[RMDB]
RNA sequence: GGGAACGACUCGAGUAGAGUCGAAAAGGGGGAUAGAAAGAGGGCGAAUUUCCUCGGGAGGAUCCCCCAAGCUUCCAACAGGCAAGCAACAAGAUAGAGGAGCCCCCAUGACGCUGGAACCGUCCCGAAACCCUCGGGUUCGCCCGAGGGAAAAGAAACAACAACAACAAC
Reactivity to 2A3 in 0.01 (KOAc 150mM, MgCl2 10mM, bicine 150mM(pH8.5), 24C), signal-to-noise 3, nucleotides 027 to 129: g000g000g000g000g000a020u010a010g100a000a100a010g070a020g040g000g000c060g120a050a130u070u100u100c000c000u010c000g020g000g000a030g020g020a010u000c000c010c000c000c000a010a010g000c000u000u000c000c010a010a000c020a020g060g000c050a060a010g030c000a000a060c000a020a070g050a100u160a060g070a080g040g030a040g010c000c030c000c000c000a080u100g020a020c030g020c030u020g010g000a020a030c050c000g040u040c000c000c000g010a040a110a060
Reactivity to DMS in 0.01 (KOAc 150mM, MgCl2 10mM, bicine 150mM(pH8.5), 24C), signal-to-noise 3, nucleotides 027 to 129: g010g030g000g030g010a010u000a080g040a070a220a120g010a090g020g000g050c190g030a120a150u000u010u000c000c020u010c000g020g000g040a160g040g000a130u020c010c000c010c040c010a000a010g010c080u000u000c000c030a140a050c140a070g020g030c080a060a000g050c080a060a040c090a030a070g020a080u020a030g000a070g020g000a100g030c030c030c000c010c080a010u060g020a070c140g030c070u030g040g000a040a080c060c030g000u140c000c040c010g020a060a210a200